[RMDB]
RNA sequence: GGGAACGACUCGAGUAGAGUCGAAAAGAGCAUGUCUUCGGACAUGCUCAAACGAGAAACGGCAAAUAAGCCGAUCCCAGGCGAUCGUACGCCAUACUCGUAAAAGUAUAGUCUUCGGACUAUACAAGUAAAUGAAUAGGUUCGCCUAUUCAUUUACAAAAGAAACAACAACAACAAC
Reactivity to DMS in 0.01 (KOAc 150mM, MgCl2 10mM, bicine 150mM(pH8.5), 24C), signal-to-noise 6, nucleotides 027 to 126: g020a010g000c000a000u000g000u000c000u000u020c220g030g010a010c000a000u000g000c020u000c000a000a050a030c020g010a010g010a070a120a170c060g000g000c000a090a120a130u010a140a120g010c030c000g010a070u000c000c000c010a260g010g000c010g010a100u010c270g010u010a130c050g000c000c000a060u000a100c000u000c010g010u000a080a070a090a110g010u000a010u000a000g010u000c000u000u010c180g010g000a020c000u000a000u000a000c000a060a070
Reactivity to 2A3 in 0.01 (KOAc 150mM, MgCl2 10mM, bicine 150mM(pH8.5), 24C), signal-to-noise 6, nucleotides 027 to 126: g000a000g010c000a000u000g010u000c010u050u060c230g050g010a000c000a000u000g000c000u000c000a010a010a000c000g000a000g020a030a150a010c010g000g000c030a070a090a300u190a290a040g000c010c000g000a030u030c000c000c000a010g010g000c010g020a050u190c120g090u160a090c060g000c000c010a020u050a050c000u010c010g020u040a010a110a020a060g010u000a000u000a010g000u000c010u020u070c280g070g000a000c000u010a000u000a000c000a000a020
This 177-nucleotide RNA was probed chemically with DMS and 2A3. As a SHAPE reagent, 2A3 marks flexible, mostly unpaired nucleotides at the ribose 2'-OH. The DMS profile rests on 6,574 reads. 2A3 adducts were read by reverse transcription with SuperScript II with manganese.